Annotation
An RNA of 207 nucleotides, treated with 2A3 and read out base by base. Conditions: 150 mM KOAc, 10 mM MgCl2 and 150 mM bicine (pH 8.5), 24 C.
[RMDB]
RNA sequence: GGGAACGACUCGAGUAGAGUCGAAAAGAAAGAAAGAACCCUUCCCGCGGGGCUGGAUCUUCCAGAUGGUGCGGGCCGGGAUAAGCCGGAGAGUGUCCCGGUUUCAGAAACAACCUUCGGCAGCCAAACUAGACUACCCACUUCGGUGGGUAGUCAAGGAAUGUAAAAUGUUCGCAUUUUACAUUCCAAAAGAAACAACAACAACAAC
Reactivity to 2A3 in 0.01 (KOAc 150mM, MgCl2 10mM, bicine 150mM(pH8.5), 24C), signal-to-noise 1, nucleotides 027 to 156: g000a000a020a000g020a010a090a040g020a170a250c060c000c000u000u000c000c000c000g030c030g000g000g000g000c000u000g000g030a070u160c090u220u020c130c000a000g000a020u010g010g140u060g010c000g000g010g000c010c000g010g000g010a000u000a000a010g000c000c000g000g000a000g000a010g010u000g000u000c000c010c010g000g000u030u010u010c000a010g030a020a030a030c050a020a010c020c000u010u000c010g010g000c010a060g030c040c050a050a080a110c060u120a050g000a000c000u000a000c000c010c020a010c000u020u040c180g080g000u000g000g000g010u000a000g000u020c000a000a000
The data come from the RNA Mapping Database (RMDB), library M2RFPK.